[RMDB]
RNA sequence: GGGAACGACUCGAGUAGAGUCGAAAAGCCUCUCGAUACGAAAGGGCCGCGAGCCUAUCGAGUUUGGAGUCAUCCGGGCCGAAGGGUUGAGACGCACCCACAGACGGGAGCCUCCAGGAGGGUUUGAGAACUCUAUCGUUCGCGAUAGAGAAAAGAAACAACAACAACAAC
Reactivity to DMS in 0.01 (KOAc 150mM, MgCl2 10mM, bicine 150mM(pH8.5), 24C), signal-to-noise 9, nucleotides 027 to 129: g000c020c020u000c040u020c020g020a080u050a050c170g030a080a150a150g000g000g030c080c000g060c160g010a210g010c030c010u020a050u030c010g000a060g000u020u030u030g030g000a000g030u020c100a050u020c030c000g020g020g020c040c050g010a100a180g020g020g010u010u010g020a050g020a060c100g000c110a090c000c010c040a070c150a070g020a110c110g000g010g000a050g010c100c020u030c020c030a080g010g010a030g020g010g030u010u040u030g000a100g030a070a060
Reactivity to 2A3 in 0.01 (KOAc 150mM, MgCl2 10mM, bicine 150mM(pH8.5), 24C), signal-to-noise 9, nucleotides 027 to 129: g040c000c000u020c000u000c030g060a040u030a210c070g110a140a070a090g040g010g000c010c020g190c080g040a050g000c010c000u050a090u020c010g000a010g010u020u080u090g010g000a020g030u060c020a070u010c040c000g000g030g020c010c020g070a070a110g000g000g000u030u070g040a040g000a050c050g020c040a050c000c020c010a050c050a040g090a020c050g000g010g010a020g030c000c010u000c010c010a020g020g030a040g020g040g010u050u070u100g090a080g010a030a020
About this RNA:
An RNA of 170 nucleotides, treated with DMS and 2A3 and read out base by base. For 2A3, 35,000 sequencing reads were counted. For DMS the reverse transcriptase was MarathonRT. The reactions ran in a buffer of 150 mM KOAc, 10 mM MgCl2 and 150 mM bicine (pH 8.5), at 24 C.